[RMDB]
The data come from the RNA Mapping Database (RMDB), library OK2TRN. Structure probing data (2A3 and DMS) for a 177-nucleotide construct. The reactions ran in a buffer of 150 mM KOAc, 10 mM MgCl2 and 150 mM bicine (pH 8.5), at 24 C. The DMS profile rests on 2,645 reads.
RNA sequence: GGGAACGACUCGAGUAGAGUCGAAAAGUGCACGGACGGGUAGCCGCAGCGACACCGUGCCCGCUGAUGCGGUGGCAGACUCGAAUCGGGCGGCCGCGCGCGCACGCAAUGCCGUCGGUGUGCCGUCGCUCAUUCGAUACUUCGGUAUCGAAUGAGCAAAAGAAACAACAACAACAAC
Reactivity to 2A3 in 0.01 (KOAc 150mM, MgCl2 10mM, bicine 150mM(pH8.5), 24C), signal-to-noise 3, nucleotides 027 to 126: g070u060g020c010a000c050g120g050a020c020g070g030g010u100a020g040c020c010g000c080a010g040c010g010a020c010a010c080c040g000u020g000c000c010c010g000c040u150g070a260u290g010c020g020g040u080g130g030c100a100g040a200c020u030c080g070a110a150u120c040g040g020g000c020g010g010c010c000g000c000g000c000g000c010g040c010a000c010g000c020a060a070u130g070c030c020g020u060c040g040g000u060g000u080g020c010c000g040u010c050
Reactivity to DMS in 0.01 (KOAc 150mM, MgCl2 10mM, bicine 150mM(pH8.5), 24C), signal-to-noise 3, nucleotides 027 to 126: g020u010g020c030a100c050g000g000a060c060g010g020g040u010a280g010c020c030g010c100a080g010c020g000a090c070a090c170c030g010u000g020c050c050c040g020c030u010g000a120u000g020c010g010g020u000g000g030c080a100g000a090c040u010c110g010a090a110u000c070g010g010g000c000g000g000c000c040g000c070g000c040g000c220g000c090a030c030g010c050a050a120u020g010c000c000g000u000c000g000g020u010g020u020g000c000c040g000u000c100